[RMDB]
RNA sequence: GGGAACGACUCGAGUAGAGUCGAAAAAGGCACACCUCACUCACAUUUUACCAACAGAGUGAGAGUGAGGUUAACCUCUCAUUUCUGUUGGUGAACGCAGAAGUUAGAGGUUGAGAACACUGACAACUGCGUUCAUAGUUGUGAGUGUUCUGUGCCAAGGUAUAAAAUGGUUCGCCAUUUUAUACCUAAAAGAAACAACAACAACAAC
Reactivity to 2A3 in 0.01 (KOAc 150mM, MgCl2 10mM, bicine 150mM(pH8.5), 24C), signal-to-noise 6, nucleotides 027 to 156: a010g010g010c010a010c000a010c000c020u010c000a000c010u030c000a010c000a030u060u120u100u160a030c000c010a010a010c010a020g010a010g020u010g010a010g000a010g000u120g030a110g060g100u080u080a040a050c010c000u000c000u000c000a010u120u300u010c000u000g010u010u010g010g030u010g010a010a010c000g000c010a010g000a050a010g030u010u030a030g040a090g150g000u030u060g040a050g020a040a020c030a010c030u020g010a000c000a040a030c030u010g020c020g060u030u020c020a030u090a040g110u030u040g000u000g000a000g000u000g000u000u000c010u010g000u000g000c010c000a010
Reactivity to DMS in 0.01 (KOAc 150mM, MgCl2 10mM, bicine 150mM(pH8.5), 24C), signal-to-noise 3, nucleotides 027 to 156: a050g000g040c000a040c070a090c020c000u000c000a070c010u020c040a130c030a070u000u000u000u010a300c040c040a080a020c060a030g000a030g050u000g000a040g000a010g130u020g000a060g030g020u010u000a050a100c160c010u000c000u000c030a020u010u010u000c010u000g010u000u000g010g010u000g020a020a020c040g010c020a050g000a030a300g000u000u020a040g010a150g010g020u000u000g040a190g030a100a070c020a080c010u010g000a020c010a020a300c000u000g010c100g020u000u000c060a110u010a070g020u010u010g020u000g010a040g010u000g000u000u000c000u010g070u000g000c020c000a010